[RMDB]
RNA sequence: GGGAACGACUCGAGUAGAGUCGAAAAAAUGUAGUCUUAAUCGUUCUGAAAUACGAAAAAUGUUGUGGAAAUCGCGUGAAAUAAUCAGAGGAAUCGUUUGAAAUCAUCGUAGUAAUCGCGCGAAAAUUUUUAGCUUAAACUUCGGUUUAAGCUAAAAAAAAGAAACAACAACAACAAC
Reactivity to DMS in 0.01 (KOAc 150mM, MgCl2 10mM, bicine 150mM(pH8.5), 24C), signal-to-noise 2, nucleotides 027 to 126: a040a030u030g000u010a030g000u060c080u000u020a130a130u000c000g000u000u000c080u020g030a080a120a180u030a000c030g010a010a080a040a130a060u010g060u030u000g020u000g000g000a030a030a100u000c000g070c010g020u020g010a000a080a100u010a110a060u040c060a110g000a040g000g010a000a050u000c030g020u050u000u010g010a110a030a100u000c000a120u000c030g010u030a070g000u000a030a150u000c010g020c000g030c000g000a000a090a030a020u000
Reactivity to 2A3 in 0.01 (KOAc 150mM, MgCl2 10mM, bicine 150mM(pH8.5), 24C), signal-to-noise 2, nucleotides 027 to 126: a000a120u260g030u160a130g030u030c030u050u020a170a090u020c040g050u090u000c110u280g090a070a100a070u230a060c000g000a050a060a060a060a060u100g050u000u000g000u000g050g030a060a030a110u000c000g020c000g000u010g050a000a000a100u080a070a000u090c040a010g030a030g260g040a020a100u040c040g100u070u090u210g090a030a060a010u180c160a010u030c080g000u000a020g000u000a070a110u020c010g000c000g000c000g000a000a060a000a000u000

Annotation
The data come from the RNA Mapping Database (RMDB), library RFM100. This 177-nucleotide RNA was probed chemically with DMS and 2A3. High 2A3 reactivity points to a flexible backbone, as in loops and unpaired stretches. Values cover nucleotides 27 to 126. The DMS profile rests on 2,182 reads. The RNA was probed in 150 mM KOAc, 10 mM MgCl2 and 150 mM bicine (pH 8.5) at 24 C. For 2A3, 1,021 sequencing reads were counted. DMS adducts were read by reverse transcription with MarathonRT.